Chemical mapping of a 207-nucleotide RNA with 2A3 and DMS.
Values cover nucleotides 27 to 156.
RNA sequence: GGGAACGACUCGAGUAGAGUCGAAAAUGUGCCGAUUACGUCCCUGCCAUUUGUACACACCGCCCGUCGUUGUUUCCGAUGAUGGUGCAAUACAGGUGAUCGGACAGGCGGUGUUUUAUCCGCCCGAAAGUUCACCGAUAUUUCUUCAAUAGAGGAACCUUUUAAGUGGGUUCGCCCACUUAAAAGGAAAAGAAACAACAACAACAAC
Reactivity to 2A3 in 0.01 (KOAc 150mM, MgCl2 10mM, bicine 150mM(pH8.5), 24C), signal-to-noise 2, nucleotides 027 to 156: u110g010u040g040c020c040g040a090u060u150a110c050g040u040c030c000c000u000g030c030c000a060u060u080u130g060u100a070c040a000c000a020c030c030g060c030c010c000g050u080c010g000u010u040g000u010u040u030c010c010g020a040u050g020a010u060g040g070u050g010c070a040a020u100a060c060a050g000g000u000g000a000u010c010g000g070a000c000a000g000g000c000g030g010u010g020u020u050u020u190a020u010c020c000g020c010c000c000g070a060a010a030g030u030u010c000a000c000c000g010a020u020a080u070u080u010c010u080u080c020a190a170u080a160g040a060g050g030a050a050
Reactivity to DMS in 0.01 (KOAc 150mM, MgCl2 10mM, bicine 150mM(pH8.5), 24C), signal-to-noise 1, nucleotides 027 to 156: u000g010u000g040c000c020g000a120u000u000a070c080g000u000c030c030c020u000g100c040c010a110u000u000u000g020u000a070c060a030c010a060c050c020g000c000c000c030g060u000c010g020u000u000g020u010u000u010c030c060g040a120u000g000a090u010g010g020u020g050c020a100a080u000a060c030a180g000g010u020g000a020u000c020g020g000a300c030a010g030g040c030g050g000u000g000u000u010u010u000a080u000c000c000g010c010c000c030g010a060a140a290g010u000u000c010a010c000c020g000a100u000a050u020u000u020c020u000u000c030a000a130u020a130g010a120g020g020a050a280
The reactions ran in a buffer of 150 mM KOAc, 10 mM MgCl2 and 150 mM bicine (pH 8.5), at 24 C. 2A3 adducts were read by reverse transcription with SuperScript II with manganese. The 2A3 profile rests on 1,223 reads. It was measured as part of the RMDB library PDB130. For DMS the reverse transcriptase was MarathonRT.